Notes
This 170-nucleotide RNA was probed chemically with 2A3 and DMS. For DMS the reverse transcriptase was MarathonRT. It was measured as part of the RMDB library 15KLIB. For 2A3 the reverse transcriptase was SuperScript II with manganese.

[RMDB]
RNA sequence: GGGAACGACUCGAGUAGAGUCGAAAACUACAAGGGACAGAUUUUAUCGCUUGGCAAAUGAGUGUGCUCAGGUGCUAAGCGAAUAUGUUCUAUGUGGUGGUGGUUACUACGUCAAACCUGGAGGUACAAAGAAGCAACUUCGGUUGCUUCAAAAGAAACAACAACAACAAC
Reactivity to 2A3 in 0.01 (KOAc 150mM, MgCl2 10mM, bicine 150mM(pH8.5), 24C), signal-to-noise 2, nucleotides 027 to 129: c030u060a040c030a110a180g040g000g000a010c010a030g100a090u010u030u110u260a160u080c010g010c000u000u000g010g020c000a000a040a030u020g000a000g010u270g050u270g190c000u000c010a000g060g000u030g000c010u000a000a000g000c000g000a000a000u010a000u000g010u010u000c020u020a080u070g010u010g020g000u010g000g020u030g010g040u030u000a050c040u020a040c030g090u080c070a060a070a040c000c010u040g080g060a070g050g020u120a060c060a010a100a040
Reactivity to DMS in 0.01 (KOAc 150mM, MgCl2 10mM, bicine 150mM(pH8.5), 24C), signal-to-noise 7, nucleotides 027 to 129: c020u020a060c090a100a300g000g000g000a050c020a020g000a200u030u040u050u080a060u040c000g010c000u000u000g020g000c010a010a040a010u030g000a040g030u050g040u070g000c010u010c010a010g000g030u000g030c000u040a010a010g000c000g020a000a000u030a050u000g000u000u000c020u000a160u030g000u000g000g000u020g010g050u060g000g010u030u020a060c120u040a020c080g000u010c060a030a050a090c030c030u000g030g020a060g000g000u020a080c160a040a090a100